[RMDB]
RNA sequence: GGGAACGACUCGAGUAGAGUCGAAAAAUCUAACCCAGUCUGUCGGUGCAGUAGAAACCUCAUACCAGGAAUUUUGCAUGUCACGAUAGGCGACAACACAGUCAUACCACAAUGCUUUGGACACUCCAAAUGGGUUGUUCAACGAUCAAGAAGGCAAAGUCCUAGGUCCGUUCGCGGACCUAGGACUAAAAGAAACAACAACAACAAC
Reactivity to 2A3 in 0.01 (KOAc 150mM, MgCl2 10mM, bicine 150mM(pH8.5), 24C), signal-to-noise 1, nucleotides 027 to 156: a030u040c030u030a000a000c000c000c000a030g030u000c020u000g010u030c030g090g010u030g010c010a000g080u130a060g050a090a130a100c000c000u000c030a140u030a070c190c000a090g000g090a210a210u040u000u020u020g010c040a070u010g180u150c000a040c080g020a000u040a000g000g090c000g060a050c040a140a000c040a000c050a040g170u160c010a210u080a190c060c010a030c100a140a080u000g040c030u090u090u010g000g010a000c000a000c000u020c000c000a200a160a300u300g000g000g000u090u020g000u040u020c020a040a010c020g100a040u120c060a080a060g040a110a000g150g000c040a120a230